[RMDB]
RNA sequence: GGGAACGACUCGAGUAGAGUCGAAAAGAUUACGUGUCGUUGUGGAAUCGAUACUACGCACGAGAUUCCAAGGUCUCUGUAGUACGUCCGCUGGUGACGUCUCUGGAGUCACGUUCGAUAUACGAAAGGUAUCUACUUCCUUCGGGAAGUAGAUACCAAAAGAAACAACAACAACAAC
Reactivity to DMS in 0.01 (KOAc 150mM, MgCl2 10mM, bicine 150mM(pH8.5), 24C), signal-to-noise 2, nucleotides 027 to 126: g000a140u010u050a040c130g020u000g010u000c010g050u000u000g040u010g030g000a070a120u000c070g000a090u040a000c030u050a000c010g000c130a040c070g000a140g000a020u000u040c120c110a060a090g000g000u020c000u000c000u020g000u050a070g020u000a000c050g020u010c000c020g000c140u020g000g060u040g000a020c050g000u000c060u010c040u000g050g000a060g050u000c030a020c010g010u000u020c020g020a080u030a040u030a160c050g070a080a100a030
Reactivity to 2A3 in 0.01 (KOAc 150mM, MgCl2 10mM, bicine 150mM(pH8.5), 24C), signal-to-noise 2, nucleotides 027 to 126: g110a070u140u190a060c040g020u030g020u060c000g000u100u070g000u000g000g170a000a120u190c070g000a000u010a070c030u020a000c020g000c020a070c070g000a000g040a040u150u010c020c010a060a090g160g000u000c030u000c010u020g070u040a000g000u050a000c060g000u000c000c000g000c080u030g060g110u260g070a000c010g060u110c000u000c000u010g060g010a000g000u090c030a020c030g030u030u020c080g010a020u060a030u020a200c080g020a020a060a000
Structure probing data (DMS and 2A3) for a 177-nucleotide construct.
Conditions: 150 mM KOAc, 10 mM MgCl2 and 150 mM bicine (pH 8.5), 24 C.